[RMDB]
Notes
This 170-nucleotide RNA was probed chemically with DMS and 2A3.
RNA sequence: GGGAACGACUCGAGUAGAGUCGAAAAUCCGGAGCUCCCUCUCGAGUUCCUCCUUUCUUCUUCUUCCAUCGAUCCACUUUCCGAGUGCCUCUUCUCUCCCCCUCCGGGUUCUCCUCGCAUCGGACUGCACCCUCCCAGUUCGCUGGGAGGAAAAGAAACAACAACAACAAC
Reactivity to DMS in 0.01 (KOAc 150mM, MgCl2 10mM, bicine 150mM(pH8.5), 24C), signal-to-noise 5, nucleotides 027 to 129: u040c050c030g030g010a090g000c070u020c010c000c020u000c000u000c060g040a130g010u000u000c070c040u000c060c040u010u010u030c040u000u000c050u000u000c050u030u040c060c030a110u000c090g000a030u000c020c020a020c090u020u030u010c060c020g000a100g030u000g000c040c010u030c000u020u020c030u010c040u040c000c000c000c010c000u000c000c000g010g000g010u010u010c030u000c020c020u030c050g010c060a080u000c000g030g020a070c020u000g000c130a190c130
Reactivity to 2A3 in 0.01 (KOAc 150mM, MgCl2 10mM, bicine 150mM(pH8.5), 24C), signal-to-noise 9, nucleotides 027 to 129: u030c010c000g010g000a010g000c020u030c010c020c000u050c020u030c040g020a030g020u050u040c010c000u040c000c000u050u060u030c020u040u010c000u040u000c020u040u020c020c020a080u060c040g060a070u040c030c010a060c040u060u070u020c020c020g030a020g050u060g050c000c010u030c000u080u010c030u010c000u020c010c000c000c010c000u010c010c010g020g000g000u060u000c010u020c010c000u000c000g050c010a050u040c010g030g020a020c020u030g010c030a070c020

The DMS profile rests on 45,451 reads. The RNA was probed in 150 mM KOAc, 10 mM MgCl2 and 150 mM bicine (pH 8.5) at 24 C.